[RMDB]
RNA sequence: GGGAACGACUCGAGUAGAGUCGAAAAAAAGAUAUGGAUCCCGAAACAGCAUCGAUCGUAUGGGACGCUAGAUCGGAAACGAUCUAGCUAACCAUACGGGAGCUGUAGUAGGGAUCCUAAGUCAAAACAUAAUUAGUACGUUCGCGUACUAAUUAUGAAAAGAAACAACAACAACAAC
Reactivity to 2A3 in 0.01 (KOAc 150mM, MgCl2 10mM, bicine 150mM(pH8.5), 24C), signal-to-noise 1, nucleotides 027 to 126: a000a000a010g010a000u020a010u030g000g000a000u000c000c010c000g000a040a010a010c000a000g030c010a030u300c100g010a000u010c000g000u000a010u000g000g040g000a000c050g010c010u000a000g000a010u000c000g000g000a000a010a000c000g000a000u000c000u000a000g000c000u000a000a000c000c000a000u010a000c000g000g000g000a010g020c000u000g010u000a010g160u020a000g000g030g000a000u010c010c000u000a000a000g000u000c010a000a050a110a050
Reactivity to DMS in 0.01 (KOAc 150mM, MgCl2 10mM, bicine 150mM(pH8.5), 24C), signal-to-noise 7, nucleotides 027 to 126: a070a080a110g000a010u000a040u020g000g000a010u000c000c000c000g000a280a160a130c000a010g010c000a300u000c220g000a010u020c000g000u000a000u000g000g000g000a070c160g000c010u000a000g010a000u000c000g010g000a010a010a030c000g010a010u010c000u000a010g000c000u000a010a300c000c000a000u000a000c000g000g010g010a000g050c000u000g010u000a020g000u000a150g000g000g000a000u000c000c000u000a000a040g000u000c000a120a100a130a210
This 177-nucleotide RNA was probed chemically with 2A3 and DMS. Conditions: 150 mM KOAc, 10 mM MgCl2 and 150 mM bicine (pH 8.5), 24 C. 2A3 adducts were read by reverse transcription with SuperScript II with manganese. Values cover nucleotides 27 to 126.